[RMDB]
RNA sequence: GGGAACGACUCGAGUAGAGUCGAAAAGUGAGAUUGUGAAGGGAUCUCGCAGGUAUCGUGAGGGAAGUAUGGGGUAGUACGAGAGGAACUCCCAUGCCGUGCCUCUAGUUUCUGGGGUUUGUCGAACGGCAAGUGCCCCGAAGCCAUCGCACGGUGGGGUGUCCUACCUGUUCGCAGGUAGGACACCAAAAGAAACAACAACAACAAC
Reactivity to 2A3 in 0.01 (KOAc 150mM, MgCl2 10mM, bicine 150mM(pH8.5), 24C), signal-to-noise 2, nucleotides 027 to 156: g060u080g010a010g030a030u110u080g020u190g170a090a100g050g010g000a020u000c020u080c100g000c040a020g000g130u100a090u200c150g050u110g050a070g000g020g010a060a030g030u040a010u070g030g000g020g000u000a000g000u020a010c060g020a010g000a030g070g010a010a040c030u020c000c000c000a010u050g010c000c010g020u020g000c000c000u000c000u010a000g000u000u040u040c210u280g000g000g020g010u020u000u000g000u000c040g070a070a130c170g000g000c000a000a000g100u120g300c000c020c000c010g000a020a000g000c000c000a160u280c120g010c030a010c020g020g000u000g000g020
Structure probing data (2A3) for a 207-nucleotide construct. For 2A3, 941 sequencing reads were counted. Source: RMDB library PDB130, as collected in RNAgym.